[RMDB]
RNA sequence: GGGAACGACUCGAGUAGAGUCGAAAAGGAACCGGAUGUCAUCACGUUGUUGCAGUACCAGAUGGCAUCUUAAAUCCGAUCUGCAAAUAAGCAUGUAGAAAGCUGAUGUGGGCUUUAGCUGGAAGGGGGAAUACAGGCAACUUCGGUUGCCUGUAAAUCUUCAUUUAUUCUUCGGAAUAAAUGAAGAAAAAGAAACAACAACAACAAC
Reactivity to DMS in 0.01 (KOAc 150mM, MgCl2 10mM, bicine 150mM(pH8.5), 24C), signal-to-noise 3, nucleotides 027 to 156: g000g020a100a110c060c120g020g020a020u010g010u010c000a020u000c020a230c200g010u000u000g000u000u000g020c020a100g030u000a050c040c070a170g010a030u000g010g000c000a020u000c000u000u000a040a090a140u000c020c010g000a120u000c010u010g000c040a060a100a140u000a060a110g020c030a080u010g010u000a120g000a110a080a100g000c030u010g020a080u010g010u000g000g030g000c050u000u000u000a070g030c040u000g020g000a080a040g010g040g030g050g010a090a260u000a010c000a010g010g040c000a000a000c020u000u020c290g050g020u000u010g000c000c000u000g010u000a000a040a090
Reactivity to 2A3 in 0.01 (KOAc 150mM, MgCl2 10mM, bicine 150mM(pH8.5), 24C), signal-to-noise 2, nucleotides 027 to 156: g020g010a050a060c030c040g020g000a010u000g010u000c000a010u000c020a020c150g040u040u000g050u060u030g030c070a050g050u070a100c040c040a010g000a020u010g000g000c010a000u020c000u000u010a020a040a000u020c020c000g010a110u010c030u110g000c020a000a020a210u130a180a020g040c050a040u090g000u080a060g090a160a100a020g000c020u060g010a160u110g060u120g030g000g000c040u060u080u150a030g000c010u020g030g030a060a030g020g000g000g010g000a030a000u050a030c000a000g000g010c000a000a000c000u020u020c090g110g000u000u000g000c030c010u000g000u000a010a010a010
Structure probing data (DMS and 2A3) for a 207-nucleotide construct. DMS adducts were read by reverse transcription with MarathonRT. Values cover nucleotides 27 to 156. The 2A3 profile rests on 1,093 reads.